[RMDB]
RNA sequence: GGGAACGACUCGAGUAGAGUCGAAAACGUGCCUGUGCGCCACUUUAUUUCGCUGUGUCCCAUGAGUACUCGCAAAUGAAGUAGAGAUUGAAGAGGAACCGGCAUCAUAAUUUAAUCGCGCACUGUGUCUAGCUUGGCGCUUCGGUGCCAGGCUAGAAAAAGAAACAACAACAACAAC
Reactivity to 2A3 in 0.01 (KOAc 150mM, MgCl2 10mM, bicine 150mM(pH8.5), 24C), signal-to-noise 9, nucleotides 027 to 126: c040g040u060g030c000c020u010g000u010g000c000g000c000c010a020c000u010u020u010a030u000u030u040c060g000c010u030g030u040g010u090c000c000c010a060u130g030a020g030u060a060c000u000c010g000c010a030a070a110u170g040a150a020g020u090a030g010a010g010a060u040u120g070a090a040g100a110g080g010a040a080c030c010g010g000c000a010u060c030a020u050a090a020u040u030u140a110a080u080c030g000c000g000c000a000c030u030g050u000g010
Reactivity to DMS in 0.01 (KOAc 150mM, MgCl2 10mM, bicine 150mM(pH8.5), 24C), signal-to-noise 9, nucleotides 027 to 126: c120g000u030g020c020c020u000g010u010g000c000g010c000c300a040c030u010u000u000a010u000u010u010c100g000c010u000g000u040g000u010c000c000c030a120u020g000a130g010u020a040c010u000c010g010c060a080a090a140u020g020a120a100g010u010a070g010a050g000a100u010u010g000a140a090g010a160g000g010a030a040c060c020g000g020c000a060u000c080a020u010a030a030u000u010u010a040a060u020c300g000c010g000c010a010c010u010g000u020g010